Structure probing data (DMS and 2A3) for a 177-nucleotide construct. In probing experiments dimethyl sulfate is read out at A N1 and C N3, which are open when not base-paired. It was measured as part of the RMDB library TTRDEL. For 2A3 the reverse transcriptase was SuperScript II with manganese. For 2A3, 1,734 sequencing reads were counted. For DMS, 762 sequencing reads were counted.
RNA sequence: GGGAACGACUCGAGUAGAGUCGAAAAGAUAUGGAGCUUUGUCAGCACACUACCCACCUCGGAAACGAGAGGUGUGAACUACUGAGAAAGCUCCUAAGUCAAACCAAGCAACUUCGGUUGCUUGGAACGUUGCACUAAGGUUCGCCUUAGUGCAACGAAAAGAAACAACAACAACAAC
Reactivity to DMS in 0.01 (KOAc 150mM, MgCl2 10mM, bicine 150mM(pH8.5), 24C), signal-to-noise 1, nucleotides 027 to 126: g010a020u030a300u000g000g000a020g010c000u000u000u000g000u000c010a010g000c030a030c000a020c030u000a070c030c030c050a300c040c000u000c000g030g000a140a080a290c000g000a010g020a080g030g000u000g000u010g000a030a030c060u000a100c040u000g000a010g000a050a000a000g000c000u000c000c000u000a040a080g010u000c130a110a130a200c000c000a010a000g000c000a010a000c000u000u050c190g090g040u000u000g010c010u020u000g000g000a030a060
Reactivity to 2A3 in 0.01 (KOAc 150mM, MgCl2 10mM, bicine 150mM(pH8.5), 24C), signal-to-noise 2, nucleotides 027 to 126: g060a060u110a150u300g000g010a010g000c030u000u060u060g150u250c000a010g080c030a010c000a000c040u120a140c020c070c050a060c050c000u000c020g000g090a080a080a070c010g040a020g000a020g010g010u040g020u000g000a030a090c080u300a010c010u300g000a000g090a000a020a010g000c010u000c020c000u010a000a000g010u000c040a000a030a110c010c000a000a000g000c010a000a010c020u100u190c290g270g010u010u020g000c040u000u010g000g010a010a010